[RMDB]
RNA sequence: GGGAACGACUCGAGUAGAGUCGAAAAGAUAUGGAUAUACAGCUUUGAUCUGACCGUAACAUCGAUCGGAAACGAUCGUGGGUCAGGGAGCUGAUAGUCCUAAGUCAAAGGCUGGUUCGCCAGCCAACUAAUGCUUUUGCUUCGGCAAAAGCAUUAGAAAAGAAACAACAACAACAAC
Reactivity to DMS in 0.01 (KOAc 150mM, MgCl2 10mM, bicine 150mM(pH8.5), 24C), signal-to-noise 2, nucleotides 027 to 126: g020a040u000a300u000g000g000a030u000a050u000a090c020a010g000c000u000u000u000g010a100u000c010u000g000a000c010c000g000u000a070a080c110a020u030c000g000a000u010c000g000g000a070a050a170c010g010a010u000c020g030u010g010g010g010u000c000a000g000g000g020a000g020c000u000g010a050u000a060g000u000c010c000u000a090a180g010u000c030a070a060a190g000g010c000u000g000g010u010u000c290g000c000c010a000g000c010c000a010a050
Reactivity to 2A3 in 0.01 (KOAc 150mM, MgCl2 10mM, bicine 150mM(pH8.5), 24C), signal-to-noise 2, nucleotides 027 to 126: g010a030u090a050u140g000g010a050u090a020u100a300c000a020g000c010u300u280u120g070a060u060c000u000g010a000c000c030g080u090a120a040c040a300u300c040g010a000u020c000g040g030a080a070a030c010g010a010u000c010g000u030g000g020g010u010c000a000g000g000g000a000g000c000u000g020a010u020a010g080u000c000c010u020a130a050g060u030c060a220a030a030g030g000c010u010g040g050u050u070c170g070c070c010a000g000c010c000a010a000
The record gives the reactivity of an RNA of 177 nucleotides to DMS and 2A3. The 2A3 profile rests on 2,344 reads. The reactions ran in a buffer of 150 mM KOAc, 10 mM MgCl2 and 150 mM bicine (pH 8.5), at 24 C. DMS adducts were read by reverse transcription with MarathonRT. It was measured as part of the RMDB library TTRDEL.